[RMDB]
RNA sequence: GGGAACGACUCGAGUAGAGUCGAAAAACUCAGCCUACAGAUUUGGUACCUGGAUUUCUGUCCAUGGUGAUUUCUGUCACCUUACUACUGAAGAAGAUACCAUUCCAGUGGACCACUGUGACCCAAGGUAGCUCAUAAAGUUCGCUUUAUGAGCUACAAAAGAAACAACAACAACAAC
Reactivity to DMS in 0.01 (KOAc 150mM, MgCl2 10mM, bicine 150mM(pH8.5), 24C), signal-to-noise 2, nucleotides 027 to 126: a160c040u000c040a040g010c130c020u010a040c020a070g020a080u010u000u010g020g000u000a010c020c000u000g010g020a140u010u000u000c030u010g000u000c120c110a080u000g010g010u000g000a010u010u000u020c210u000g020u000c000a000c010c020u000u010a150c180u000a060c090u010g000a060a020g010a180a040g010a060u000a000c050c060a050u010u000c000c040a080g010u000g030g010a030c010c140a150c040u000g010u000g010a140c000c020c030a110a140g000
Reactivity to 2A3 in 0.01 (KOAc 150mM, MgCl2 10mM, bicine 150mM(pH8.5), 24C), signal-to-noise 3, nucleotides 027 to 126: a000c020u020c040a000g020c000c000u040a030c000a050g040a120u060u140u170g000g000u010a030c010c020u030g010g100a120u040u070u120c050u110g090u050c040c040a060u040g000g000u030g020a020u120u300u230c100u230g040u000c000a000c000c000u050u130a100c050u020a000c020u030g030a060a030g020a030a010g040a070u060a080c040c000a000u030u010c000c000a050g000u050g020g000a020c030c000a020c040u010g030u100g050a060c000c000c020a000a010g130
The record gives the reactivity of an RNA of 177 nucleotides to DMS and 2A3. Source: RMDB library RFMREP, as collected in RNAgym. The RNA was probed in 150 mM KOAc, 10 mM MgCl2 and 150 mM bicine (pH 8.5) at 24 C. Values are in units of 0.01, from 0 to 300, in steps of 10. DMS adducts were read by reverse transcription with MarathonRT. 2A3 adducts were read by reverse transcription with SuperScript II with manganese.